[RMDB]
RNA sequence: GGGAACGACUCGAGUAGAGUCGAAAACUAUUGCUAAUGCCAAAUGUUUCAGCAGAGGCGGGUAUGAAACAUUCGCUGAGGAGUGGAGAAAACUUGACCGGGAUCUGAUUCUUUUGGAUAUUCCCACGCUUCAAAGCGAAUUCGUUCGCUUUGAAGCAAAAGAAACAACAACAACAAC
Reactivity to 2A3 in 0.01 (KOAc 150mM, MgCl2 10mM, bicine 150mM(pH8.5), 24C), signal-to-noise 1, nucleotides 027 to 126: c020u080a070u230u170g000c020u070a030a170u260g040c020c010a110a000a030u050g000u000u000u040c000a080g070c040a040g020a050g250g030c000g020g020g020u070a110u130g000a040a040a000c010a000u040u060c060g020c170u130g120a100g050g040a020g090u040g000g030a090g020a050a110a000a100c000u070u100g070a300c020c040g030g000g040a020u080c010u000g020a040u020u000c000u100u050u010u070g010g000a000u000a050u110u040c020c000c020a020c010